[RMDB]
RNA sequence: GGGAACGACUCGAGUAGAGUCGAAAAUCAAAUUCAGUACCUGUCCUAUGCAUGGUAGGCACUGGCCCAGAAGGCUGCCACAGAAACACUGUGACUCAUGGGCCCUGUUCCUGUGUCCCAGGCUCAGAUGUUCCUAGUUUUUCGAAACUAGGAACAUAAAAGAAACAACAACAACAAC
Reactivity to 2A3 in 0.01 (KOAc 150mM, MgCl2 10mM, bicine 150mM(pH8.5), 24C), signal-to-noise 9, nucleotides 027 to 126: u100c020a020a020a070u190u070c040a010g030u030a050c000c010u070g110u180c010c020u140a110u200g050c040a040u100g040g020u040a060g020g000c020a010c040u050g010g010c000c000c010a030g050a070a060g080g040c110u100g030c020c000a010c010a020g060a070a150a010c090a030c070u020g030u030g060a030c010u030c080a080u070g010g010g000c000c010c010u040g010u030u010c000c000u010g020u030g030u050c010c010c000a020g050g000c020u030c050a050g010
Reactivity to DMS in 0.01 (KOAc 150mM, MgCl2 10mM, bicine 150mM(pH8.5), 24C), signal-to-noise 9, nucleotides 027 to 126: u030c120a060a100a110u020u010c030a030g020u010a060c020c010u000g010u020c020c020u000a100u030g020c170a060u010g000g010u010a030g010g000c040a030c030u010g000g000c000c010c000a040g010a170a130g000g010c120u010g010c070c020a020c030a040g000a170a150a090c250a090c030u000g010u010g010a070c020u000c050a120u000g010g000g000c010c020c090u010g010u010u000c010c010u000g000u010g000u000c020c010c010a090g000g020c060u010c120a100g000